[RMDB]
RNA sequence: GGGAACGACUCGAGUAGAGUCGAAAAAUGGCGAAUGCAUGGGGAACUACAUCUGUGUCGCGAGUUCGAUUCUCGCCAGGGCCUAGUCCUGUAGCUCAGUUGGUAGAGCAAGCUGUUCCCCGGACACAAAAUCCAGCUAGGUUCGCCUAGCUGGAAACCCUUAUCCCAUGUUCGCAUGGGAUAAGGGAAAAGAAACAACAACAACAAC
Reactivity to DMS in 0.01 (KOAc 150mM, MgCl2 10mM, bicine 150mM(pH8.5), 24C), signal-to-noise 2, nucleotides 027 to 156: a050u020g010g010c020g030a060a110u000g000c040a150u010g030g000g020g050a040a060c000u000a050c010a020u000c080u000g000u020g030u010c030g000c040g010a080g020u000u000c060g030a300u000u000c010u010c010g040c040c000a050g020g030g030c050c090u040a110g020u010c040c000u000g010u000a040g020c020u010c000a080g000u010u000g000g130u020a080g000a040g020c000a120a100g000c090u000g000u010u000c000c000c000c000g010g000a060c060a090c050a030a050a120a120u000c030c000a030g000c000u000a020g010g010u000u010c300g060c030c000u000a000g000c020u000g000g000a000a000a050
Reactivity to 2A3 in 0.01 (KOAc 150mM, MgCl2 10mM, bicine 150mM(pH8.5), 24C), signal-to-noise 2, nucleotides 027 to 156: a000u150g080g010c080g080a060a010u160g030c060a080u110g000g000g000g000a020a030c030u170a040c090a130u120c060u040g080u030g130u280c000g000c000g010a000g000u000u020c010g020a020u010u000c010u010c000g010c010c000a010g010g000g010c040c090u080a070g040u040c000c000u000g020u020a000g000c000u000c000a060g050u170u120g140g050u150a020g020a000g050c000a000a010g010c030u020g010u000u010c000c000c010c000g000g000a010c000a000c000a040a170a000a000u000c000c010a000g000c000u000a000g000g030u000u000c030g070c000c000u000a000g000c000u000g010g000a000a000a020